This 207-nucleotide RNA was probed chemically with DMS.
It was measured as part of the RMDB library OK3TST.
For DMS the reverse transcriptase was MarathonRT.
[RMDB]
RNA sequence: GGGAACGACUCGAGUAGAGUCGAAAAAUGAUUGUUAGGAGGAUCCCACCAUUACACAGAUUUUUUGUUCAUACUUUAGAGAUGGCAUCGAAACCAAGCCCCCAAAUGGAAAUAUCUUCCUUCCAAGUUUCUAUAAAUGCCAUUGGACAUACUAUUAUAUUAAUCCCUGAUUCGUCAGGGAUUAAUAAAAAGAAACAACAACAACAAC
Reactivity to DMS in 0.01 (KOAc 150mM, MgCl2 10mM, bicine 150mM(pH8.5), 24C), signal-to-noise 1, nucleotides 027 to 156: a080u000g010a160u010u020g030u000u000a080g030g020a050g000g000a110u020c030c020c030a300c050c020a060u000u000a060c050a050c030a060g000a060u000u000u000u000u000u000g010u000u000c030a070u010a050c060u000u000u000a190g030a140g000a090u000g010g000c000a050u000c080g000a070a070a080c070c020a050a120g010c020c010c020c020c040a040a050a090u000g000g010a060a010a120u000a190u000c020u000u000c010c010u000u010c030c020a040a160g000u000u000u000c020u000a080u010a010a070a020u000g010c010c020a190u030u000g010g000a050c020a050u010a140c070u010a100u000u010a200